[RMDB]
RNA sequence: GGGAACGACUCGAGUAGAGUCGAAAAAGAGGCGAUGGCUGCUUAUACCUGUCAGCAGGCAGCCCUUAUCAAUACCAGCCUAGACAAGACCAAGGGUGAGCUCAGCCAACUCACGCCUGAGCUAAGGAUACUGCUGGGGAUUCGUCCCCAGCAGUAUAAAAGAAACAACAACAACAAC
Reactivity to 2A3 in 0.01 (KOAc 150mM, MgCl2 10mM, bicine 150mM(pH8.5), 24C), signal-to-noise 3, nucleotides 027 to 126: a000g100a040g000g000c050g060a050u110g010g030c000u010g020c020u120u060a030u030a150c040c040u060g030u040c030a050g040c010a000g040g010c010a050g050c000c000c010u120u110a130u090c090a020a030u060a210c040c040a010g030c010c000u030a000g030a080c090a130a030g030a050c040c050a060a030g050g010g000u060g010a000g000c010u020c110a020g050c010c020a040a090c060u030c040a030c030g120c010c010u010g000a020g030c020u090a080a060g100g000
Reactivity to DMS in 0.01 (KOAc 150mM, MgCl2 10mM, bicine 150mM(pH8.5), 24C), signal-to-noise 3, nucleotides 027 to 126: a070g020a020g010g000c030g000a070u000g020g010c000u000g000c010u000u020a090u030a050c030c030u000g010u020c130a090g010c080a010g000g020c000a040g000c030c030c060u010u020a100u010c170a040a100u020a120c120c050a110g020c020c010u000a090g000a120c080a130a020g000a110c060c070a090a060g000g010g030u010g000a030g040c040u020c070a100g000c060c060a060a190c080u010c110a080c090g020c190c030u000g000a060g000c090u000a080a120g000g000